[RMDB]
RNA sequence: GGGAACGACUCGAGUAGAGUCGAAAACGCUGGGAUUUAUAGGAGGAAUCGCGAAACGAAGCUCCCCACCUCUCCUGAAGCGCGCACGGGAGAGAGGCUUCGGAGAUUCUCUCCUAUAAAUCCUGUGCUGAAGCGCGCACGGCAACCGAAAGGUGCGGAUUUAAGAACAGUUCGCUGUUCUUAAAUCAAAAGAAACAACAACAACAAC
Reactivity to DMS in 0.01 (KOAc 150mM, MgCl2 10mM, bicine 150mM(pH8.5), 24C), signal-to-noise 1, nucleotides 027 to 156: c020g020c030u000g020g020g020a050u010u020u000a030u010a080g000g000a050g060g000a020a020u000c000g000c020g010a080a110a180c020g010a070a070g030c020u010c300c130c090c070a300c300c040u000c020u000c000c020u070g030a080a050g020c010g080c040g020c020a300c070g010g000g000a080g000a060g020a180g000g010c000u000u000c010g000g000a090g000a050u020u000c000u000c010u000c000c000u010a060u000a000a010a010u000c010c020u020g000u000g000c000u000g000a040a010g030c000g040c010g000c040a300c060g020g010c010a040a070c050c030g010a140a160a220g000g010u000g000c000g010
Reactivity to 2A3 in 0.01 (KOAc 150mM, MgCl2 10mM, bicine 150mM(pH8.5), 24C), signal-to-noise 2, nucleotides 027 to 156: c010g000c000u010g000g000g000a000u000u000u010a000u000a010g010g010a000g000g020a010a000u010c030g010c120g230a150a100a050c020g010a010a000g000c000u150c060c110c030c000a070c030c010u000c000u010c000c000u040g060a270a050g000c000g000c010g000c010a000c000g010g010g000a000g000a000g010a030g020g000c000u000u000c000g020g000a100g000a010u000u000c100u010c000u000c030c000u030a000u000a000a000a000u000c000c000u000g000u000g000c000u020g010a050a020g010c000g000c000g000c000a020c010g000g000c010a020a010c000c000g050a080a040a020g000g010u020g020c020g030